[RMDB]
RNA sequence: GGGAACGACUCGAGUAGAGUCGAAAAAAUAACGCUGUAUAUGCCAAGGUUGACACCCAACUUGUCAAGUUGUUUGACAACCGUACAAAUUUGCCGGUUUCUACUGCUUUUGAGCAUUAUACAAACCCCAAGCAACCUAUUUCGAUAGGUUGCUUGGAAAAGAAACAACAACAACAAC
Reactivity to 2A3 in 0.01 (KOAc 150mM, MgCl2 10mM, bicine 150mM(pH8.5), 24C), signal-to-noise 1, nucleotides 027 to 126: a000a000u300a060a070c050g000c050u010g050u040a030u000a010u040g020c000c000a070a020g040g000u020u050g010a000c000a060c050c010c000a030a010c020u090u060g140u080c040a080a070g050u020u010g070u100u120u150g080a050c070a080a010c020c000g050u040a100c060a170a230a160u200u150u120g090c070c000g050g020u060u090u100c060u160a050c020u000g050c000u230u150u000u020g010a030g000c020a000u100u160a010u060a020c030a020a050a000c000c010
Reactivity to DMS in 0.01 (KOAc 150mM, MgCl2 10mM, bicine 150mM(pH8.5), 24C), signal-to-noise 2, nucleotides 027 to 126: a060a010u000a030a050c210g020c190u000g000u010a020u000a020u020g010c010c050a100a090g010g010u010u000g000a120c040a080c110c060c050a010a040c120u000u010g020u010c090a050a050g020u010u000g010u010u000u010g010a050c070a010a010c040c040g020u000a100c060a030a110a130u000u000u000g030c220c070g020g000u010u010u020c130u000a040c040u000g010c050u020u000u010u010g000a050g020c010a020u000u010a010u010a060c060a010a120a100c140c060